[RMDB]
RNA sequence: GGGAACGACUCGAGUAGAGUCGAAAAGCCACUCGCGUAGCUGCCAAACUCAGUUGAAACAACUGCCUUCUCCCGGCGAGAUUCAGGCAUUGUGUUCGUACGUUUGGCUCUACUGCGGAUGGCGUGCUUAGAACAAGAGAUUCGUCUCUUGUUCUAAAAAAGAAACAACAACAACAAC
Reactivity to DMS in 0.01 (KOAc 150mM, MgCl2 10mM, bicine 150mM(pH8.5), 24C), signal-to-noise 9, nucleotides 027 to 126: g000c000c000a020c020u000c010g030c020g000u000a000g010c200u000g000c000c000a010a010a010c020u010c200a190g010u010u020g000a030a060a020c010a010a020c220u000g000c010c000u000u000c010u000c000c040c200g000g020c170g000a020g000a060u040u020c270a030g000g010c000a030u000u000g010u010g010u000u000c010g000u010a060c170g000u000u000u000g000g000c000u000c000u000a010c010u030g050c010g000g000a030u000g000g010c000g010u010g000c120
Reactivity to 2A3 in 0.01 (KOAc 150mM, MgCl2 10mM, bicine 150mM(pH8.5), 24C), signal-to-noise 9, nucleotides 027 to 126: g000c000c000a000c010u010c000g000c000g000u000a000g000c170u050g000c010c000a010a000a010c050u110c150a100g030u050u060g080a020a010a000c000a000a020c140u010g000c000c000u030u010c010u020c010c030c040g280g010c230g010a010g000a010u240u250c100a010g000g000c000a000u000u030g020u020g090u040u020c040g060u080a070c030g000u000u000u000g000g000c000u000c000u000a010c010u040g000c000g000g000a010u000g000g000c010g000u040g010c030
Structure probing data (DMS and 2A3) for a 177-nucleotide construct. High DMS reactivity at an A or C suggests that its Watson-Crick edge is free. For DMS the reverse transcriptase was MarathonRT. Conditions: 150 mM KOAc, 10 mM MgCl2 and 150 mM bicine (pH 8.5), 24 C.